Source: RMDB library OK1LIB, as collected in RNAgym. Chemical mapping of a 177-nucleotide RNA with 2A3 and DMS. The reactions ran in a buffer of 150 mM KOAc, 10 mM MgCl2 and 150 mM bicine (pH 8.5), at 24 C. 2A3 adducts were read by reverse transcription with SuperScript II with manganese. Reactivities are given for positions 27 through 126. For 2A3, 880 sequencing reads were counted. 2A3 is a SHAPE reagent: it acylates the 2'-hydroxyl of flexible nucleotides of all four kinds.
[RMDB]
RNA sequence: GGGAACGACUCGAGUAGAGUCGAAAAGAAAGAAAAAGAAAUCAUCAAAUGAGGUCAAAAGUCAGAAUUUCGGGCGUAAAUGCGACAUUAUGCAGAAAGCCGACCUCGAUGUCGUUUAGAAAGAAAACGUAAAUGGCAGUUUCGACUGCCAUUUACGAAAAGAAACAACAACAACAAC
Reactivity to 2A3 in 0.01 (KOAc 150mM, MgCl2 10mM, bicine 150mM(pH8.5), 24C), signal-to-noise 2, nucleotides 027 to 126: g000a000a080a000g020a020a040a030a000a050g140a090a240a050u050c000a000u000c030a050a000a300u250g000a010g000g040u030c030a010a010a010a010g070u100c070a020g000a040a030u020u000u050c000g030g130g000c010g040u040a000a110a000u070g000c000g060a040c030a050u130u170a110u300g040c050a000g080a070a000a000g020c000c000g010a000c000c000u000c020g000a010u060g000u000c000g000u000u050u080a180g120a020a050a000g140a060a000a000a000
Reactivity to DMS in 0.01 (KOAc 150mM, MgCl2 10mM, bicine 150mM(pH8.5), 24C), signal-to-noise 2, nucleotides 027 to 126: g020a160a100a020g040a000a100a010a080a100g000a060a070a010u000c000a080u000c170a090a170a250u010g050a090g000g020u000c030a030a080a100a120g030u000c000a060g000a140a250u000u000u010c060g000g020g000c000g000u050a000a030a080u000g040c130g000a120c210a180u020u010a000u030g000c000a110g000a040a110a210g000c050c000g000a030c140c000u000c130g010a010u020g030u000c020g010u040u000u040a200g000a090a090a140g030a030a080a140a100